RNA sequence: GGGAACGACUCGAGUAGAGUCGAAAAUAUACAUAAGAAGUCGGCACAACUCCCGACUCGCGGUGAGCGAUGCAGCGUAGCGCGAGCUACGCAGCUGCUGUGCGGACGGCUAGCAAAAGCUAGCCGACCGAUUUUACUACUUCGGUAGUAAAAUCGGAAAAGAAACAACAACAACAAC
Reactivity to 2A3 in 0.01 (KOAc 150mM, MgCl2 10mM, bicine 150mM(pH8.5), 24C), signal-to-noise 6, nucleotides 027 to 126: u110a010u030a020c060a040u250a010a070g130a110a010g050u020c010g050g060c100a030c030a290a300c120u020c010c010c010g030a020c010u030c010g020c020g030g050u190g070a030g010c040g160a130u140g030c040a020g010c000g000u010a000g000c020g010c050g050a030g000c000u000a000c000g000c000a010g000c000u050g000c010u020g020u050g020c010g040g040a030c010g000g030c000u000a000g000c010a150a130a300a000g000c000u000a000g000c000c000g010a000
Reactivity to DMS in 0.01 (KOAc 150mM, MgCl2 10mM, bicine 150mM(pH8.5), 24C), signal-to-noise 4, nucleotides 027 to 126: u040a140u050a130c110a120u020a090a100g020a200a110g000u000c010g040g030c090a010c070a070a130c080u010c060c000c010g010a120c150u000c020g020c030g020g030u030g010a160g000c060g010a050u010g000c030a020g010c000g010u000a010g000c020g000c300g000a280g000c010u000a010c000g000c010a000g020c000u010g010c070u010g020u000g000c010g000g010a030c010g010g010c000u000a000g010c010a180a050a110a160g000c000u000a010g010c000c000g010a020
This 177-nucleotide RNA was probed chemically with 2A3 and DMS. The DMS profile rests on 8,673 reads.